RNA sequence: GGGAACGACUCGAGUAGAGUCGAAAAAGACUUAUAAGGCAAUCAGCCAACUGUGGGCAUGAAAUCCUUGGGAGGAAAGAGAAGGAAGUGGGAGGGGCAGCCAUGGUGAAUGUUUCCCUAAGUUAUAGUCAAGUUCUUUGAGAGAACAUAACCUCAACUAAUACCCCUAUUUCGAUAGGGGUAUUAGAAAAGAAACAACAACAACAAC
Reactivity to 2A3 in 0.01 (KOAc 150mM, MgCl2 10mM, bicine 150mM(pH8.5), 24C), signal-to-noise 1, nucleotides 027 to 156: a030g030a000c070u080u020a050u050a260a070g050g020c020a030a110u120c070a070g000c000c010a110a020c080u120g010u030g160g000g000c030a050u030g050a040a070a090u140c030c040u080u020g020g010g050a190g040g030a080a020a040g110a070g030a040a040g090g020a000a040g070u280g080g000g050a190g020g010g000g000c030a010g000c010c000a060u040g000g020u040g020a090a060u130g020u000u020u020c000c000c000u000a050a000g000u030u080a060u030a060g070u040c050a080a070g010u030u000c000u030u050u060g030a050g000a000g000a000a000c020a110u110a040a050c000c090u180c000a000a030
Source: RMDB library OK3TST, as collected in RNAgym. Structure probing data (2A3) for a 207-nucleotide construct. Conditions: 150 mM KOAc, 10 mM MgCl2 and 150 mM bicine (pH 8.5), 24 C. 2A3 adducts were read by reverse transcription with SuperScript II with manganese.